RNA sequence: GGGAACGACUCGAGUAGAGUCGAAAACUUAACGCGUUCGCGCGUUAAGAAACAACAUAAACAUCGAGUUGACGAUGAGACAAAUACCGUCAGUGUAGACGGAAAGCAUUCGCUUCGGCGAAUGCAACUUAGACAAUGGGUUCGCCCAUUGUCUAAGAAAAGAAACAACAACAACAAC
Reactivity to 2A3 in 0.01 (KOAc 150mM, MgCl2 10mM, bicine 150mM(pH8.5), 24C), signal-to-noise 5, nucleotides 027 to 126: c000u000u000a010a000c000g030c000g000u020u070c200g010c000g000c010g100u010u010a000a000g010a010a060a000c040a020a000c020a080u220a100a160a020c010a030u020c010g030a080g130u080u100g220a120c030g010a020u030g030a020g060a040c060a040a080a030u120a170c010c000g010u000c020a070g100u070g160u300a050g010a000c000g000g000a050a040a010g000c000a000u000u010c010g010c010u030u090c230g120g000c000g000a000a000u000g000c000a000a000
Reactivity to DMS in 0.01 (KOAc 150mM, MgCl2 10mM, bicine 150mM(pH8.5), 24C), signal-to-noise 5, nucleotides 027 to 126: c000u000u000a000a010c000g000c000g020u000u010c210g050c000g040c000g000u000u000a010a020g010a130a080a080c080a060a060c090a060u000a150a120a180c030a020u000c010g010a200g010u010u010g010a130c010g000a030u010g000a150g000a100c220a070a080a110u010a080c010c000g000u000c000a200g020u010g000u010a090g000a020c000g000g000a050a040a080g000c000a010u000u000c010g000c000u000u010c170g020g010c000g000a010a000u000g010c000a030a040
Chemical mapping of a 177-nucleotide RNA with 2A3 and DMS. The DMS profile rests on 5,954 reads. The reactions ran in a buffer of 150 mM KOAc, 10 mM MgCl2 and 150 mM bicine (pH 8.5), at 24 C. It was measured as part of the RMDB library M2PK50.